[RMDB]
This 177-nucleotide RNA was probed chemically with DMS. Source: RMDB library TTRDEL, as collected in RNAgym. The reactions ran in a buffer of 150 mM KOAc, 10 mM MgCl2 and 150 mM bicine (pH 8.5), at 24 C.
RNA sequence: GGGAACGACUCGAGUAGAGUCGAAAAGAUAUGGAUAUCUCCGUCUGCGAUGAAAUCGGAAACGAUGGAGCAGGCGGAGAGUAUCCUAAGUCAAAGAGAAAGGUCUCGUUCGCGAGACCUUUCUCAACUACUCGUUCAGGUUCGCCUGAACGAGUAGAAAAGAAACAACAACAACAAC
Reactivity to DMS in 0.01 (KOAc 150mM, MgCl2 10mM, bicine 150mM(pH8.5), 24C), signal-to-noise 1, nucleotides 027 to 126: g030a030u000a300u000g000g010a040u000a040u010c000u000c000c000g010u000c000u000g010c010g020a180u010g000a080a080a010u000c020g000g010a190a080a170c000g030a010u000g010g000a130g020c010a010g000g000c000g000g000a000g000a000g000u010a020u000c020c000u010a050a140g010u000c040a100a140a150g010a030g000a020a000a010g000g000u010c000u000c020g030u010u010c210g030c030g000a000g020a000c000c020u010u000u000c000u000c000a070a120